Chemical mapping of a 177-nucleotide RNA with DMS and 2A3. For DMS the reverse transcriptase was MarathonRT. For 2A3 the reverse transcriptase was SuperScript II with manganese. For DMS, 1,692 sequencing reads were counted. DMS (dimethyl sulfate) methylates the pairing face of unpaired adenines and cytosines. The 2A3 profile rests on 2,429 reads. The RNA was probed in 150 mM KOAc, 10 mM MgCl2 and 150 mM bicine (pH 8.5) at 24 C.
RNA sequence: GGGAACGACUCGAGUAGAGUCGAAAAGAUAUGGAAAUUCUCGACAUGCGGCCAAUGAUCGGAAACGAUCAAAAAUCGCAACAGCGAGGAAUUUCCUAAGUCAAAUCCUACGCUUCGGCGUAGGAAACAUUCAACUAUGCUUCGGCAUAGUUGAAUGAAAAGAAACAACAACAACAAC
Reactivity to DMS in 0.01 (KOAc 150mM, MgCl2 10mM, bicine 150mM(pH8.5), 24C), signal-to-noise 2, nucleotides 027 to 126: g020a030u000a300u020g020g000a000a000a020u000u000c000u000c010g010a070c070a300u000g000c040g000g010c110c060a100a190u000g010a010u010c010g000g000a090a070a120c000g020a020u020c000a010a020a050a170a140u010c010g010c000a000a060c300a140g020c030g000a000g020g000a000a030u000u000u000c000c000u000a020a090g020u000c020a110a120a100u000c000c000u000a000c000g010c000u000u000c190g010g010c000g000u000a000g000g020a000a040a080
Reactivity to 2A3 in 0.01 (KOAc 150mM, MgCl2 10mM, bicine 150mM(pH8.5), 24C), signal-to-noise 1, nucleotides 027 to 126: g010a020u090a020u170g000g000a010a010a040u010u000c020u020c000g110a090c040a090u140g000c010g020g040c020c010a030a120u020g000a000u000c000g000g000a070a090a040c000g010a000u040c000a000a010a010a000a010u020c000g000c010a030a000c040a020g090c000g000a090g060g080a050a050u000u000u000c010c000u000a110a010g050u020c040a080a020a140u000c000c000u000a010c010g030c000u030u100c300g160g000c000g010u000a010g000g020a020a000a000